[RMDB]
RNA sequence: GGGAACGACUCGAGUAGAGUCGAAAAAAUUUGGCAAGUGUUGCAAACUGUUCGGACUUGCAUUUCGAUUCUCGAGAAACGAGGAAUCAAGGUCGAAAUUUCAUCUUCAAACAGUGCAAAAGUUCGACAGUGGGACAUAAUUCGUUAUGUCCCACUGAAAAGAAACAACAACAACAAC
Reactivity to 2A3 in 0.01 (KOAc 150mM, MgCl2 10mM, bicine 150mM(pH8.5), 24C), signal-to-noise 2, nucleotides 027 to 126: a010a010u180u030u030g030g020c110a080a030g090u030g020u180u060g080c020a090a080a210c000u010g030u070u000c050g040g000a010c000u020u000g000c000a010u020u010u010c010g000a000u230u030c020u000c010g060a100g120a160a200a080c070g000a020g030g140a020a150u100c050a040a000g130g000u000c000g060a030a010a030u070u070u150c020a040u010c030u050u000c000a080a040a050c020a010g010u000g000c030a000a040a110a060g000u040u090c050g020a000
Reactivity to DMS in 0.01 (KOAc 150mM, MgCl2 10mM, bicine 150mM(pH8.5), 24C), signal-to-noise 3, nucleotides 027 to 126: a080a100u000u000u000g020g000c060a080a090g020u000g030u010u000g020c040a040a100a100c050u010g000u000u000c080g010g000a000c030u000u000g020c300a050u000u000u000c020g000a020u000u000c010u000c030g010a210g020a050a100a100c090g010a050g010g050a040a070u010c110a050a100g000g010u000c010g000a020a050a030u010u010u010c040a000u010c110u030u000c050a040a040a010c090a020g020u000g030c090a030a030a080a080g010u000u000c040g010a110
Structure probing data (2A3 and DMS) for a 177-nucleotide construct.
The data come from the RNA Mapping Database (RMDB), library OK2TST.
2A3 adducts were read by reverse transcription with SuperScript II with manganese.
For DMS, 2,043 sequencing reads were counted.
Conditions: 150 mM KOAc, 10 mM MgCl2 and 150 mM bicine (pH 8.5), 24 C.
High 2A3 reactivity points to a flexible backbone, as in loops and unpaired stretches.
DMS adducts were read by reverse transcription with MarathonRT.
Values cover nucleotides 27 to 126.